[RMDB]
RNA sequence: GGGAACGACUCGAGUAGAGUCGAAAACAGCUCAAGGAGGCCUGCGUGCCUCUGUAGGCUCCACCUCUGGGGGCAGGGCACAGACAAAAAGACAGCAGUAACCUCUGCAGACUUAAAUGUCCCUGUCUGACAGCUUUGAAGAGAGCAGUGGUUCUCCCAAGGACAUUCAGUUCGCUGAAUGUCCUUGAAAAGAAACAACAACAACAAC
Reactivity to DMS in 0.01 (KOAc 150mM, MgCl2 10mM, bicine 150mM(pH8.5), 24C), signal-to-noise 2, nucleotides 027 to 156: c070a090g010c010u000c040a300a300g030g000a060g020g020c000c010u030g030c170g040u000g000c000c000u000c000u000g000u000a150g030g010c020u000c050c080a140c050c010u010c030u020g000g000g030g010g030c030a030g010g020g030c020a150c020a130g000a140c070a010a170a130a070a140g040a080c040a100g010c030a060g000u000a120a180c180c030u000c000u000g010c020a150g000a140c010u000u000a020a150a150u000g000u000c030c030c010u010g010u010c020u000g010a140c030a130g010c080u020u010u000g000a080a150g010a150g010a080g000c030a180g020u010g010g020u020u050c030u020c010c060
Reactivity to 2A3 in 0.01 (KOAc 150mM, MgCl2 10mM, bicine 150mM(pH8.5), 24C), signal-to-noise 2, nucleotides 027 to 156: c060a010g010c010u010c050a080a000g020g020a020g010g030c060c100u270g150c110g100u200g000c000c040u010c000u000g000u000a000g000g000c020u020c000c000a010c000c010u050c070u060g080g010g010g000g000c000a000g020g000g000c140a000c020a010g120a050c070a040a160a030a020a000g050a040c110a030g030c020a020g030u120a140a100c030c010u070c000u020g000c000a030g120a180c010u050u070a000a100a110u050g010u000c000c000c000u000g000u000c000u000g020a020c020a010g010c030u080u090u280g120a150a040g050a000g000a000g020c150a040g030u020g040g000u030u020c120u030c000c000